[RMDB]
Structure probing data (DMS and 2A3) for a 177-nucleotide construct.
Source: RMDB library OK2TST, as collected in RNAgym.
The reactions ran in a buffer of 150 mM KOAc, 10 mM MgCl2 and 150 mM bicine (pH 8.5), at 24 C.
For 2A3 the reverse transcriptase was SuperScript II with manganese.
RNA sequence: GGGAACGACUCGAGUAGAGUCGAAAAACAUCGCGUUGCCAGGUCUGGCCUGCCACCGUGACGUAGAUCGGUGCGUCAUCCUCGACGGGCACGCGCUGCUGGUAUUCGCCCGUCUUGAAGAUCAUGGGACAGCCGUAGGAUUCGUCCUACGGCUGUCAAAAGAAACAACAACAACAAC
Reactivity to DMS in 0.01 (KOAc 150mM, MgCl2 10mM, bicine 150mM(pH8.5), 24C), signal-to-noise 2, nucleotides 027 to 126: a090c040a030u000c000g030c000g000u010u010g020c030c000a090g010g020u000c040u000g030g010c140c060u010g000c040c030a050c010c010g000u000g010a240c190g020u000a090g010a140u000c040g000g000u000g020c170g010u020c030a040u010c050c020u000c150g000a030c030g020g010g000c030a030c050g030c030g010c050u000g000c040u000g000g000u000a200u000u000c140g000c010c010c000g000u010c050u010u020g180a100a060g000a040u000c070a130u000g010g000
Reactivity to 2A3 in 0.01 (KOAc 150mM, MgCl2 10mM, bicine 150mM(pH8.5), 24C), signal-to-noise 2, nucleotides 027 to 126: a000c010a020u110c030g000c030g080u070u120g040c010c010a070g000g120u040c060u040g030g020c000c050u040g000c040c000a010c020c010g020u010g010a040c130g110u040a000g040a130u070c050g030g080u000g050c030g010u020c020a030u090c010c000u090c050g000a020c000g000g000g000c000a010c010g050c030g000c020u050g010c010u050g000g080u080a180u070u130c070g070c050c020c000g050u040c030u040u130g000a130a020g050a120u120c050a120u150g120g100